An RNA of 177 nucleotides, treated with 2A3 and DMS and read out base by base.
Conditions: 150 mM KOAc, 10 mM MgCl2 and 150 mM bicine (pH 8.5), 24 C.
For 2A3, 878 sequencing reads were counted.
2A3 adducts were read by reverse transcription with SuperScript II with manganese.
The DMS profile rests on 1,858 reads.
[RMDB]
RNA sequence: GGGAACGACUCGAGUAGAGUCGAAAAGGAUAAGGUCGCGCCUGACUGGUCGAAGAAUAUGCAGACGACGCUGCCGCCAUUCAAUGAUGCGCUGGUGUAUCUGUUGAGAAAGGGCGAUCCGGAUAUGCAAACUCCUCAGUUUCGACUGAGGAGUUUGAAAAGAAACAACAACAACAAC
Reactivity to 2A3 in 0.01 (KOAc 150mM, MgCl2 10mM, bicine 150mM(pH8.5), 24C), signal-to-noise 2, nucleotides 027 to 126: g110g010a080u040a150a040g020g010u020c010g000c070g230c060c010u040g000a030c060u070g000g140u160c120g040a060a010g020a120a160u090a030u300g010c020a000g020a070c150g010a010c020g030c070u040g030c000c010g040c040c000a060u130u220c020a070a160u110g020a080u100g050c110g000c100u160g010g020u070g000u030a000u010c030u020g060u050u110g030a040g010a100a040a040g000g000g000c010g000a000u000c010c030g040g000a090u150a040u190g060
Reactivity to DMS in 0.01 (KOAc 150mM, MgCl2 10mM, bicine 150mM(pH8.5), 24C), signal-to-noise 2, nucleotides 027 to 126: g010g010a060u010a130a140g000g000u000c060g010c050g010c040c020u000g000a300c080u010g000g020u000c100g040a080a130g000a100a120u000a090u000g000c000a050g000a060c060g000a040c060g010c030u000g000c230c000g020c020c040a050u000u010c180a050a110u010g000a070u000g010c050g000c040u020g020g020u000g010u000a130u000c020u000g040u000u000g000a070g010a060a100a070g000g010g000c020g000a050u010c010c020g000g000a100u000a050u000g020